[RMDB]
Structure probing data (2A3 and DMS) for a 177-nucleotide construct. DMS adducts were read by reverse transcription with MarathonRT. Source: RMDB library TTRDES, as collected in RNAgym. For DMS, 7,842 sequencing reads were counted. The 2A3 profile rests on 14,295 reads. The RNA was probed in 150 mM KOAc, 10 mM MgCl2 and 150 mM bicine (pH 8.5) at 24 C.

RNA sequence: GGGAACGACUCGAGUAGAGUCGAAAAGAUAUGGAUCCUGAACCAUGGAGACUGCGGUCGGAAACGACCGGCAGUCUAUGAAGUGGCGCAGGAUCCUAAGUCAAAUCGCGUCGUUCGCGACGCGAAACUGCUAGAUAAUGUUCGCAUUAUCUAGCAGAAAAGAAACAACAACAACAAC
Reactivity to 2A3 in 0.01 (KOAc 150mM, MgCl2 10mM, bicine 150mM(pH8.5), 24C), signal-to-noise 3, nucleotides 027 to 126: g040a030u040a020u130g000g000a000u010c000c010u000g010a020a030c000c010a010u040g130g070a040g020a020c000u010g000c000g020g000u010c010g010g020a120a060a040c010g000a010c010c030g060g070c000a000g000u010c000u010a030u010g000a150a070g020u010g010g000c060g000c010a000g010g000a000u010c010c000u000a020a000g030u000c040a020a000a210u030c000g010c010g010u010c010g020u060u060c300g000c020g140a000c000g010c010g000a030a030a010
Reactivity to DMS in 0.01 (KOAc 150mM, MgCl2 10mM, bicine 150mM(pH8.5), 24C), signal-to-noise 6, nucleotides 027 to 126: g000a050u010a300u000g010g010a010u010c010c000u000g010a090a080c010c000a020u000g010g010a030g010a020c000u000g040c000g010g000u000c000g030g000a090a100a230c000g000a020c000c000g010g030c010a000g000u000c000u000a070u010g000a200a210g010u010g010g030c300g010c010a010g000g010a000u000c000c000u000a010a080g010u000c040a060a160a140u000c010g010c010g010u000c010g000u000u020c260g020c000g010a010c010g030c000g000a010a040a150